The record gives the reactivity of an RNA of 177 nucleotides to DMS.

RNA sequence: GGGAACGACUCGAGUAGAGUCGAAAAAAAAGAUAUGGAGCGUACGCUGCUUGGAUUUAUGUGGCCGAGGUGGUCGGAAACGACCAUACAGCCACAUUGUCAGCAGAGUACGCUCCUAAGUCAAAAAGUUUAGAAACAAGUUCGCUUGUUUCUAAACAAAAGAAACAACAACAACAAC
Reactivity to DMS in 0.01 (KOAc 150mM, MgCl2 10mM, bicine 150mM(pH8.5), 24C), signal-to-noise 4, nucleotides 027 to 126: a090a060a080a110g000a020u000a300u010g000g000a020g020c000g010u000a000c000g000c000u000g000c000u000u010g030g010a020u000u000u000a000u010g020u000g010g020c000c000g000a300g000g020u000g000g000u010c010g010g000a130a090a230c020g000a010c010c000a010u000a000c010a030g010c010c000a010c000a000u000u000g000u000c010a020g000c000a030g000a040g010u000a010c020g010c000u000c010c010u000a000a090g010u010c030a090a110a120a160a130

Annotation:
DMS adducts were read by reverse transcription with MarathonRT. It was measured as part of the RMDB library TTRDES.